RNA sequence: GGGAACGACUCGAGUAGAGUCGAAAACUUAACUUUUGUGUGGUAAAAUACCGCUUGCAAGGAACAUGAGCGAAUUCUUUUGUACUUAGCAUCAGGAAUAUAAGGCUUAGAAAUCCUUCUAUCAAUGCCCCACCUACAUAUUCGUAUGUAGGUGGGGAAAAGAAACAACAACAACAAC
Reactivity to 2A3 in 0.01 (KOAc 150mM, MgCl2 10mM, bicine 150mM(pH8.5), 24C), signal-to-noise 1, nucleotides 027 to 126: c020u070u050a050a090c060u070u130u220u150g100u100g030u020g020g020u060a000a010a000a300u060a120c000c020g000c020u030u080g060c030a000a000g010g000a070a020c020a110u110g040a000g030c060g070a130a090u040u020c040u030u060u000u020g030u020a090c130u100u150a040g000c040a030u060c000a030g150g080a040a050u100a000u050a190a000g130g000c020u020u000a030g050a020a050a030u000c040c000u050u030c000u000a150u110c020a120a100u120g040
Reactivity to DMS in 0.01 (KOAc 150mM, MgCl2 10mM, bicine 150mM(pH8.5), 24C), signal-to-noise 1, nucleotides 027 to 126: c040u000u000a080a100c080u020u000u000u010g010u000g020u020g000g000u030a020a070a080a090u000a020c000c030g020c070u000u010g010c150a060a000g000g010a020a040c070a220u000g010a020g050c070g050a050a070u000u000c000u000u010u000u000g020u060a050c140u050u000a060g000c050a100u010c070a020g000g020a140a070u020a080u000a250a130g040g000c030u000u000a030g000a100a070a080u000c000c020u000u000c050u000a080u000c060a100a110u010g000
An RNA of 177 nucleotides, treated with 2A3 and DMS and read out base by base. The RNA was probed in 150 mM KOAc, 10 mM MgCl2 and 150 mM bicine (pH 8.5) at 24 C. It was measured as part of the RMDB library OK2TRN. The 2A3 profile rests on 806 reads. For DMS the reverse transcriptase was MarathonRT.